Source information:
An RNA of 177 nucleotides, treated with DMS and 2A3 and read out base by base. Values cover nucleotides 27 to 126.
[RMDB]
RNA sequence: GGGAACGACUCGAGUAGAGUCGAAAAACGACCAGCGGUACGCCGCUGGUCGAACCUGUGAAUUAUCACUAAAAAUACAAUUUUGAAAGCAAUUCACAACACGGUGAUCGAUACGUCGAUCACCGAAAACACAGUUUUCAUUCGUGAAAACUGUGUUAAAAGAAACAACAACAACAAC
Reactivity to DMS in 0.01 (KOAc 150mM, MgCl2 10mM, bicine 150mM(pH8.5), 24C), signal-to-noise 4, nucleotides 027 to 126: a090c030g030a010c010c000a010g050c000g000g060u000a110c240g050c020c000g020c010u000g010g000u010c020g000a000a050c000c000u000g010u000g000a020a010u000u010a020u040c060a100c090u020a000a030a020a010a010u020a130c300a170a120u010u010u000u000g000a080a160a230g000c130a000a000u000u000c000a000c000a090a150c280a220c000g010g010u000g000a020u000c000g020a020u020a080c170g030u000c000g000a000u010c000a010c000c010g000a010a030
Reactivity to 2A3 in 0.01 (KOAc 150mM, MgCl2 10mM, bicine 150mM(pH8.5), 24C), signal-to-noise 8, nucleotides 027 to 126: a020c010g000a000c000c010a000g010c020g010g020u040a030c270g040c050c000g010c010u000g000g000u010c000g000a000a010c000c010u000g000u010g010a010a010u040u020a060u200c020a020c090u120a040a050a030a060a030u240a110c120a160a180u040u030u050u070g100a150a060a010g030c060a020a010u010u000c000a010c010a120a140c090a110c080g000g000u010g000a000u000c000g010a010u030a050c230g100u020c000g010a000u000c000a000c000c000g010a000a000